[RMDB]
Structure probing data (DMS) for a 177-nucleotide construct. Reactivities are given for positions 27 through 126.
RNA sequence: GGGAACGACUCGAGUAGAGUCGAAAAGCAUGAAGCCAGGCAGUGACCCCCGAUUAGAAAGCAACUGGGUUAUGGCGAACCCUGCGAUGGGUCAGACAGUGACCGUAGAGGCGUUACGGGCAGUCAGAGAGUCUGUAAACUUCGGUUUACAGACUCUAAAAGAAACAACAACAACAAC
Reactivity to DMS in 0.01 (KOAc 150mM, MgCl2 10mM, bicine 150mM(pH8.5), 24C), signal-to-noise 2, nucleotides 027 to 126: g000c090a050u000g020a100a090g020c000c060a060g010g000c070a070g040u000g010a220c060c030c010c060c020g020a130u030u000a110g000a090a090a140g010c070a090a100c110u000g010g000g010u010u010a020u010g040g020c020g010a110a040c030c000c010u000g000c110g010a090u000g000g000g000u000c050a110g020a060c120a050g020u010g000a040c010c040g010u000a050g020a110g000g010c020g010u010u000a060c060g010g000g020c040a050g000u000c090a130g000